An RNA of 177 nucleotides, treated with 2A3 and DMS and read out base by base. The DMS profile rests on 1,947 reads. The RNA was probed in 150 mM KOAc, 10 mM MgCl2 and 150 mM bicine (pH 8.5) at 24 C. It was measured as part of the RMDB library M2PK50.
RNA sequence: GGGAACGACUCGAGUAGAGUCGAAAACUAGUGCCAUUCGUGGCACUAGAAGGGGUCCAGCCUGGAAAGGCUGGAGGUAUUGGAAUCGUCGGGCCGCCAUUCAAGGUACGCUAUUCGUAGCGUACAACUCUCGAGAGGUAUUCGUACCUCUCGAGAGAAAAGAAACAACAACAACAAC
Reactivity to 2A3 in 0.01 (KOAc 150mM, MgCl2 10mM, bicine 150mM(pH8.5), 24C), signal-to-noise 2, nucleotides 027 to 126: c000u000a000g010u000g020c000c020a050u060u060c300g090u060g000g000c000a010c000u000a000g000a010a020g020g000g000g050u030c010c000a000g000c000c010u060g070g160a220a150a030g010g010c000u000g010g040a000g020g000u080a100u070u210g100g020a050a070u090c030g050u020c020g030g000g000c020c020g000c030c000a040u070u080c040a070a000g150g010u010a000c000g000c010u020a030u000u110c230g120u040a000g010c010g000u000a010c000a000a010
Reactivity to DMS in 0.01 (KOAc 150mM, MgCl2 10mM, bicine 150mM(pH8.5), 24C), signal-to-noise 2, nucleotides 027 to 126: c000u000a000g000u000g000c000c000a030u000u010c200g040u010g000g000c010a000c000u000a000g010a140a090g000g010g010g020u000c000c000a000g000c000c010u020g000g050a090a180a010g010g030c000u000g000g010a010g000g010u010a060u000u000g040g010a070a060u000c160g010u000c060g010g000g020c020c070g010c040c050a070u000u020c130a110a150g010g020u000a010c000g010c000u010a040u000u010c220g000u000a000g010c000g000u000a010c000a050a140